[RMDB]
Conditions: 150 mM KOAc, 10 mM MgCl2 and 150 mM bicine (pH 8.5), 24 C. An RNA of 207 nucleotides, treated with 2A3 and read out base by base. 2A3 adducts were read by reverse transcription with SuperScript II with manganese. It was measured as part of the RMDB library OK3TST.
RNA sequence: GGGAACGACUCGAGUAGAGUCGAAAAGCCAGGCAUGGUGGCGCAUACCUGUAAUUCCAGCUACUCAGAAGGCUGAGGCAGAAGAAUCACUUGAACCCAGGAGGCGGAGGUAGCAGUGAGCCAAGAUUGCGCCAUUGUACUCCAGCCUGGGCAACAAACAUUUGGCACUAUUCGUAGUGCCAAAUGUAAAAGAAACAACAACAACAAC
Reactivity to 2A3 in 0.01 (KOAc 150mM, MgCl2 10mM, bicine 150mM(pH8.5), 24C), signal-to-noise 1, nucleotides 027 to 156: g040c000c000a000g000g040c060a070u110g030g030u020g020g020c000g050c000a030u010a060c010c020u000g050u080a000a120u080u080c060c000a000g000c000u020a100c040u020c040a080g050a180a070g130g000c020u020g000a100g030g000c020a020g030a120a030g050a050a110u080c050a060c030u060u150g010a050a010c020c000c000a010g020g020a020g120g060c170g020g060a070g000g030u090a010g000c000a000g000u000g180a030g000c050c070a100a040g170a210u100u140g040c100g020c000c010a000u000u030g000u000a000c010u000c030c020a020g000c000c000u010g000g000g030c000a000a040c020a010a070